[RMDB]
RNA sequence: GGGAACGACUCGAGUAGAGUCGAAAAGUGACGUGCAGGACUUGCCGCUGUAGAGCAGCAUGUCUACCUCGAACGUGUCCGUCCGCACGGCCGUCAGCGCGAAACCUGGAUGAACGCCAGCUUUAGCGGACGUCCAAGCUUUCGAGCUUGGACGUCCAAAAGAAACAACAACAACAAC
Reactivity to 2A3 in 0.01 (KOAc 150mM, MgCl2 10mM, bicine 150mM(pH8.5), 24C), signal-to-noise 2, nucleotides 027 to 126: g130u120g000a010c000g010u050g090c090a120g010g000a010c000u000u050g080c010c020g000c030u020g090u140a050g010a030g110c020a000g010c030a100u110g030u000c000u040a090c000c040u020c070g040a100a040c030g020u060g100u060c030c000g010u000c010c010g000c000a010c000g000g020c000c000g040u020c020a010g000c000g010c000g000a000a090a080c030c000u020g040g000a080u050g110a080a000c110g000c030c000a050g000c010u120u080u070a040g040c010
Source information:
Source: RMDB library OK1LIB, as collected in RNAgym. Structure probing data (2A3) for a 177-nucleotide construct. For 2A3 the reverse transcriptase was SuperScript II with manganese. Values cover nucleotides 27 to 126. The reactions ran in a buffer of 150 mM KOAc, 10 mM MgCl2 and 150 mM bicine (pH 8.5), at 24 C.